[RMDB]
RNA sequence: GGGAACGACUCGAGUAGAGUCGAAAAGAUAUGGAAGGUUAGGUUGUUCAACAGCUCCUGUCGGAAACGACAGGAGACAUGAACCCUACUGCCUUCCUAAGUCAAAAGCUCAGCUUCGGCUGAGCAACCUUGUGUCGUUGUUCGCAACGACACAAGGAAAAGAAACAACAACAACAAC
Reactivity to 2A3 in 0.01 (KOAc 150mM, MgCl2 10mM, bicine 150mM(pH8.5), 24C), signal-to-noise 1, nucleotides 027 to 126: g020a020u070a000u090g010g010a000a010g000g030u100u070a030g030g050u200u270g010u130u300c040a120a090c050a230g000c000u000c000c000u000g000u010c000g020g000a060a090a030c020g030a000c000a020g030g000a000g010a000c000a020u030g020a010a030c000c010c000u020a060c080u060g010c000c000u000u000c000c000u010a110a010g030u020c020a080a020a050a190g000c000u000c010a000g010c020u020u200c300g220g000c000u040g020a000g030c000a000a000
Reactivity to DMS in 0.01 (KOAc 150mM, MgCl2 10mM, bicine 150mM(pH8.5), 24C), signal-to-noise 1, nucleotides 027 to 126: g000a070u020a300u000g010g010a000a000g020g030u000u000a030g010g040u030u000g030u000u000c030a080a030c250a200g030c010u000c000c000u000g000u000c000g000g010a070a120a160c010g000a010c000a020g000g010a000g000a000c150a120u000g050a010a040c020c000c000u000a020c300u000g050c000c000u010u020c000c000u000a000a100g000u030c020a060a120a120a090g010c000u000c000a000g000c020u000u030c300g060g000c010u000g000a000g000c010a020a020